[RMDB]
Background
An RNA of 177 nucleotides, treated with DMS and 2A3 and read out base by base. The reactions ran in a buffer of 150 mM KOAc, 10 mM MgCl2 and 150 mM bicine (pH 8.5), at 24 C. The 2A3 profile rests on 21,987 reads.
RNA sequence: GGGAACGACUCGAGUAGAGUCGAAAAGAAUACGCGUCGACGAAUAUUGUUCUUGUAUGGCUGAGUACUUUUUUUAAGUACUCUUAUGUAGAGUUAUACUUUACAUUGGAUAUUAUUCGUCGUUGCAGGGUAGCGUAGUCUUCGGAUUACGCUACCCAAAAGAAACAACAACAACAAC
Reactivity to DMS in 0.01 (KOAc 150mM, MgCl2 10mM, bicine 150mM(pH8.5), 24C), signal-to-noise 3, nucleotides 027 to 126: g030a110a080u040a060c170g010c020g000u000c000g000a020c000g000a030a010u000a020u010u000g020u000u000c020u030u030g020u010a080u050g000g020c160u020g000a020g000u000a000c000u000u000u000u030u020u020u010a010a000g000u000a000c010u000c000u010u010a010u000g010u010a010g010a040g010u020u020a100u020a210c010u000u010u030a020c020a030u000u010g000g000a030u000a020u010u010a000u000u000c000g000u000c010g010u000u010g010c000a180
Reactivity to 2A3 in 0.01 (KOAc 150mM, MgCl2 10mM, bicine 150mM(pH8.5), 24C), signal-to-noise 9, nucleotides 027 to 126: g080a040a060u180a100c100g000c000g020u010c010g000a000c000g000a000a010u010a010u020u060g030u020u020c040u080u140g110u120a110u110g160g040c100u050g000a000g000u000a000c000u010u050u070u060u040u130u300a010a000g000u000a000c000u000c000u010u020a080u040g040u040a020g010a010g050u080u130a130u060a180c000u020u060u010a030c020a060u030u110g000g000a000u010a010u050u020a000u000u000c000g000u010c000g000u010u020g000c010a020